RNA sequence: GGGAACGACUCGAGUAGAGUCGAAAAGGGAAGGUCUGCCUCCUCGAAGGCGAGGGCGCGUUCGUACCUGAGGGCCUUGAGGAGCUCGGGCGGUCGGUCUUUCCGCCUCGCGAGGGCGCGGGUGAGGCCGUAUACGGCCGUUCGCGGCCGUAUACGGAAAAGAAACAACAACAACAAC
Reactivity to 2A3 in 0.01 (KOAc 150mM, MgCl2 10mM, bicine 150mM(pH8.5), 24C), signal-to-noise 4, nucleotides 027 to 126: g080g020g030a130a040g030g020u050c060u030g030c000c020u000c000c010u000c030g060a030a010g010g010c030g000a010g000g010g020c280g010c020g140u090u150c060g020u070a300c000c010u020g010a070g050g220g000c020c000u110u210g150a260g020g040a050g000c010u010c020g000g010g010c010g020g040u050c020g000g040u000c010u050u100u030c060c040g000c010c000u030c050g080c020g010a030g000g020g020c060g000c010g000g000g020u080g070a050g050g020
Reactivity to DMS in 0.01 (KOAc 150mM, MgCl2 10mM, bicine 150mM(pH8.5), 24C), signal-to-noise 5, nucleotides 027 to 126: g000g000g010a130a100g020g000u010c080u010g020c210c000u000c000c010u000c020g010a130a030g010g020c010g030a170g010g000g020c040g020c040g020u010u010c070g000u010a120c020c010u000g010a090g000g000g000c010c010u000u010g010a110g010g010a030g000c040u000c040g000g000g000c020g000g020u010c030g010g000u000c020u010u000u010c090c020g010c010c010u000c060g010c050g000a090g010g010g000c260g010c050g010g000g010u010g010a070g000g010